[RMDB]
RNA sequence: GGGAACGACUCGAGUAGAGUCGAAAAGGUUUGCGCUUUCGAGCGCAAACCAAAGUUUACUGAGCAUGAUGAAAUGAUGCUCAAAAUGAUUACUCUGAAGAAAUACGACUUCCUUCGGGAAGUCGUACUAAGACUGUGGAUUCGUCCACAGUCUUAGAAAAGAAACAACAACAACAAC
Reactivity to DMS in 0.01 (KOAc 150mM, MgCl2 10mM, bicine 150mM(pH8.5), 24C), signal-to-noise 2, nucleotides 027 to 126: g010g070u010u000u000g010c000g000c000u020u010u030c200g030a020g040c030g000c000a000a000a010c000c000a050a020a130g020u000u010u010a110c230u010g010a000g000c000a010u000g010a180u000g020a110a080a250u030g000a030u000g010c000u000c000a020a010a060a070u000g000a230u000u000a070c130u000c010u010g040a090a110g000a040a090a210u010a000c000g010a000c000u000u000c000c000u000u000c260g030g000g000a020a000g000u000c000g000u000a000